[RMDB]
RNA sequence: GGGAACGACUCGAGUAGAGUCGAAAACGGGUAGCCUGCGACUUGCUGCGCGUGGCCCUAAGCAAUGAAGAUGACACUUGAGAGAGGUUCCACUCUGCAGAGACAUCUUCACCGUCAGGUGGCGCGCGGUAGCCGCCAAAUUCGUUUGGCGGCUACCAAAAGAAACAACAACAACAAC
Reactivity to DMS in 0.01 (KOAc 150mM, MgCl2 10mM, bicine 150mM(pH8.5), 24C), signal-to-noise 3, nucleotides 027 to 126: c110g000g000g020u010a070g000c030c040u010g020c040g010a090c070u040u000g020c040u010g020c040g000c020g040u000g000g000c040c000c020u010a110a200g010c090a110a120u010g000a030a010g000a020u020g010a250c240a110c020u000u010g010a180g000a020g000a050g010g000u000u020c190c130a180c010u000c000u010g000c040a170g000a080g000a090c030a000u000c000u000u000c010a040c080c100g030u010c140a050g000g020u010g000g020c000g000c040g040c130
Reactivity to 2A3 in 0.01 (KOAc 150mM, MgCl2 10mM, bicine 150mM(pH8.5), 24C), signal-to-noise 7, nucleotides 027 to 126: c030g030g010g040u060a010g020c020c030u050g030c040g040a070c060u070u140g020c030u070g000c020g000c010g020u030g090g040c000c020c000u040a080a020g030c030a020a090u040g000a000a000g010a000u010g030a040c040a030c150u030u050g010a020g000a000g000a010g140g040u230u110c050c000a090c010u000c000u030g010c040a020g020a010g080a170c000a010u000c000u010u000c000a010c030c020g070u110c040a020g000g030u050g050g010c010g000c000g000c000
Chemical mapping of a 177-nucleotide RNA with DMS and 2A3.
The data come from the RNA Mapping Database (RMDB), libraries RFM100 and RFMREP.
Reactivities are given for positions 27 through 126.
Conditions: 150 mM KOAc, 10 mM MgCl2 and 150 mM bicine (pH 8.5), 24 C.
2A3 adducts were read by reverse transcription with SuperScript II with manganese.